[RMDB]
RNA sequence: GGGAACGACUCGAGUAGAGUCGAAAAAGACCACAGGAUUGACAUUGCAGUUGCCAUCAGUGACGAUGGAGGACUUACCUGGCCAAGGAAGUCGUUCGUGUUACAGUCUAAGCCGGAUGUCGAGAAUGGAAUGUUCAUGGAUGGAUGUAUUUUGGAGACAUGUACCGUAGUUCGCUACGGUACAUGUAAAAGAAACAACAACAACAAC
Reactivity to 2A3 in 0.01 (KOAc 150mM, MgCl2 10mM, bicine 150mM(pH8.5), 24C), signal-to-noise 2, nucleotides 027 to 156: a000g100a040c040c020a030c040a030g030g020a060u060u120g000a020c040a060u030u140g000c020a070g070u060u030g020c030c010a040u050c040a100g010u040g160a060c030g040a030u050g010g000a030g000g010a030c010u040u040a150c020c050u100g140g000c040c010a010a000g030g010a000a040g030u010c040g090u000u050c040g000u050g020u090u070a020c050a080g040u000c040u100a020a000g000c000c020g040g000a010u070g030u120c050g010a030g000a120a050u070g020g110a070a060u050g060u100u070c050a080u100g050g000a040u030g000g030a050u060g040u140a130u040u160u150u160g050g000a040g000
Reactivity to DMS in 0.01 (KOAc 150mM, MgCl2 10mM, bicine 150mM(pH8.5), 24C), signal-to-noise 2, nucleotides 027 to 156: a080g020a170c030c040a100c060a130g030g000a260u000u000g010a090c050a080u020u000g060c060a120g020u010u000g040c030c000a030u000c040a170g040u010g020a110c030g030a080u010g040g020a050g040g000a050c030u010u000a050c020c030u000g020g020c090c150a120a140g040g000a070a060g040u000c020g000u010u000c040g020u000g050u000u000a030c040a110g010u000c050u010a040a090g010c010c000g030g020a060u000g020u000c070g030a070g000a100a130u000g000g000a080a090u010g010u010u000c050a120u000g010g010a100u010g000g010a050u000g010u000a050u010u000u000u010g020g000a300g000
An RNA of 207 nucleotides, treated with 2A3 and DMS and read out base by base.
The RNA was probed in 150 mM KOAc, 10 mM MgCl2 and 150 mM bicine (pH 8.5) at 24 C.
For 2A3 the reverse transcriptase was SuperScript II with manganese.
The DMS profile rests on 4,322 reads.